[RMDB]
RNA sequence: GGGAACGACUCGAGUAGAGUCGAAAAUGUGGUGCUAAGUAUAUCUUGUUUACCUUAUCUUUCUUUGGAAAACGUUUUGAAGUCUGGUUGGAUUUGUCACAUCAUGCCUGUUGCCUAGCACUGCCACCGUUGUAUUACGGUUCGCCGUAAUACAACGAAAAGAAACAACAACAACAAC
Reactivity to DMS in 0.01 (KOAc 150mM, MgCl2 10mM, bicine 150mM(pH8.5), 24C), signal-to-noise 5, nucleotides 027 to 126: u010g030u000g010g020u000g010c020u000a040a060g020u010a070u010a060u010c040u010u000g010u000u010u010a130c040c020u000u020a070u010c080u010u010u010c050u010u010u010g020g010a070a070a070a090c130g010u000u000u010u000g010a040a080g010u000c040u000g010g010u000u000g010g000a090u000u010u000g010u010c130a050c110a060u000c050a050u000g010c030c030u000g020u000u000g000c010c020u010a040g010c020a030c030u000g000c020c180a130c140
Reactivity to 2A3 in 0.01 (KOAc 150mM, MgCl2 10mM, bicine 150mM(pH8.5), 24C), signal-to-noise 5, nucleotides 027 to 126: u090g020u010g000g020u010g000c010u020a030a020g020u020a090u020a060u250c050u060u080g030u010u090u060a070c010c000u070u040a110u060c040u040u160u000c020u090u080u060g030g000a020a030a020a040c040g060u040u020u050u160g050a070a020g030u010c030u010g020g040u030u050g070g010a090u030u040u150g130u100c020a030c010a080u060c020a020u070g030c000c010u020g010u090u020g000c000c000u000a010g000c000a000c020u010g000c010c010a040c020

This 177-nucleotide RNA was probed chemically with DMS and 2A3. As a SHAPE reagent, 2A3 marks flexible, mostly unpaired nucleotides at the ribose 2'-OH.